[RMDB]
RNA sequence: GGGAACGACUCGAGUAGAGUCGAAAAGGGCUUGACGCAUCGCCCGAAUACGAUGCAUGUGCUUUUGCACUAAGAUAAAUGUCCGUAUUGUAGGGGACGUAGAACCUACUCAUUAAUGUCCGAAGAGUCUGGGACGAUCAUCAGGCAAGACUAAGAAAGUCCGGUAUUAUUUCGAUAAUACCGGACUAAAAGAAACAACAACAACAAC
Reactivity to 2A3 in 0.01 (KOAc 150mM, MgCl2 10mM, bicine 150mM(pH8.5), 24C), signal-to-noise 2, nucleotides 027 to 156: g000g020g020c000u070u040g060a010c060g020c010a030u000c020g010c030c000c000g020a010a010u060a020c020g040a000u000g000c000a060u030g020u000g020c020u000u150u250u300g010c080a050c040u050a060a100g050a130u170a130a160a040u180g000u020c000c000g010u030a030u010u120g050u050a000g030g030g000g020a010c040g000u020a070g020a050a020c000c010u020a010c000u000c000a040u020u190a050a130u180g060u080c040c040g070a080a000g000a030g100u020c000u090g100g000g010a040c040g010a050u000c000a020u020c000a000g000g050c070a170a060g030a070c030u020a040a070g020a200a250
Reactivity to DMS in 0.01 (KOAc 150mM, MgCl2 10mM, bicine 150mM(pH8.5), 24C), signal-to-noise 1, nucleotides 027 to 156: g000g000g030c000u000u030g030a140c030g020c120a030u010c010g000c000c020c070g040a120a120u000a020c000g000a020u000g030c050a160u000g000u000g000c000u010u000u010u010g020c020a060c000u020a110a140g020a180u000a070a100a110u010g020u000c130c030g030u000a080u000u000g030u010a090g040g010g010g000a090c060g010u000a060g000a060a090c020c020u000a030c060u000c020a140u020u010a060a080u010g040u010c060c040g000a200a140g010a150g020u000c010u030g000g030g020a100c060g010a060u000c060a050u000c000a090g000g020c000a020a040g000a090c070u020a050a130g010a130a180